[RMDB]
The record gives the reactivity of an RNA of 170 nucleotides to DMS and 2A3. The RNA was probed in 150 mM KOAc, 10 mM MgCl2 and 150 mM bicine (pH 8.5) at 24 C. For 2A3, 6,116 sequencing reads were counted.
RNA sequence: GGGAACGACUCGAGUAGAGUCGAAAAGUGACUAGGAAUCAGGAUCCAGUGGAUCCGUGGGAAUUAUCCCGUUCCACCCCCGCGGCACACUCCUUCCCCCCUGCGGGCCCCCCCAUAAGAUGGCAGGACAGGUUAGUCUUCGGACUAACCAAAAGAAACAACAACAACAAC
Reactivity to DMS in 0.01 (KOAc 150mM, MgCl2 10mM, bicine 150mM(pH8.5), 24C), signal-to-noise 7, nucleotides 027 to 129: g010u030g000a230c000u050a120g020g040a060a040u030c120a080g010g010a030u010c010c050a190g030u050g010g040a030u010c050c020g080u020g000g000g000a050a070u040u050a000u030c010c000c010g000u020u020c030c040a160c150c160c020c000c030g040c060g000g000c100a070c060a130c120u020c050c040u000u010c020c010c020c060c030c030u050g050c040g000g000g000c040c000c000c010c000c010c020a080u050a030a100g040a030u030g020g050c040a010g060g030a050c140a090
Reactivity to 2A3 in 0.01 (KOAc 150mM, MgCl2 10mM, bicine 150mM(pH8.5), 24C), signal-to-noise 3, nucleotides 027 to 129: g030u020g050a100c080u120a060g020g000a060a050u050c060a000g070g000a010u020c010c060a140g100u220g120g000a000u000c020c010g000u040g000g000g040a060a010u230u060a070u180c000c000c010g010u020u010c000c010a040c040c030c010c010c000g000c000g020g000c030a020c010a040c080u050c010c010u000u010c000c000c000c000c000c000u000g000c000g000g020g000c050c010c000c000c000c000c000a030u010a040a020g040a010u030g020g000c010a000g030g030a020c020a030